This 207-nucleotide RNA was probed chemically with 2A3 and DMS. Reactivities are given for positions 27 through 156.
[RMDB]
RNA sequence: GGGAACGACUCGAGUAGAGUCGAAAAGCGCAAAUCCACAAACGCCAACGAUGAGCGUUUCGCUGUAGCCGCUUAAGGCAACAGCCGGGGCCGCCUGAGCCCUGUUACCAAAGAGGGCUGGCGGGGGUAAUUACUUAUUGCUUCGGCAAUAAGUAAAGGAGAUAGAAGGUUUCGACCUUCUAUCUCCAAAAGAAACAACAACAACAAC
Reactivity to 2A3 in 0.01 (KOAc 150mM, MgCl2 10mM, bicine 150mM(pH8.5), 24C), signal-to-noise 2, nucleotides 027 to 156: g060c030g000c090a070a030a050u050c050c070a090c070a180a020a000c030g010c020c020a070a080c180g120a160u160g030a020g050c000g000u010u100u130c060g010c010u000g000u010a010g020c000c000g040c160u270u240a150a090g010g030c020a000a020c000a030g000c000c000g000g000g000g000c010c000g000c020c050u160g140a010g000c020c000c000u050g110u080u070a110c010c010a040a000a100g140a040g000g000g020c000u000g020g020c000g000g040g000g080g010u050a110a070u050u000a020c000u010u010a000u020u000g020c000u040u060c150g070g030c000a000a000u000a000a000g000u000a000a000a060
Reactivity to DMS in 0.01 (KOAc 150mM, MgCl2 10mM, bicine 150mM(pH8.5), 24C), signal-to-noise 1, nucleotides 027 to 156: g040c010g130c020a050a110a020u000c010c000a080c020a040a260a070c030g000c020c060a080a180c130g000a130u000g000a150g000c000g000u000u000u010c070g060c020u010g000u010a060g030c020c020g020c290u010u000a160a220g030g020c000a020a000c020a020g010c000c070g020g010g010g010c000c020g050c040c020u040g020a130g020c020c000c000u000g010u000u020a300c140c110a000a110a190g010a140g000g000g000c010u000g010g010c040g000g000g000g010g040u000a060a180u010u000a000c010u010u000a020u000u000g020c000u030u020c300g060g000c000a010a010u000a020a060g020u000a000a030a120
The 2A3 profile rests on 941 reads.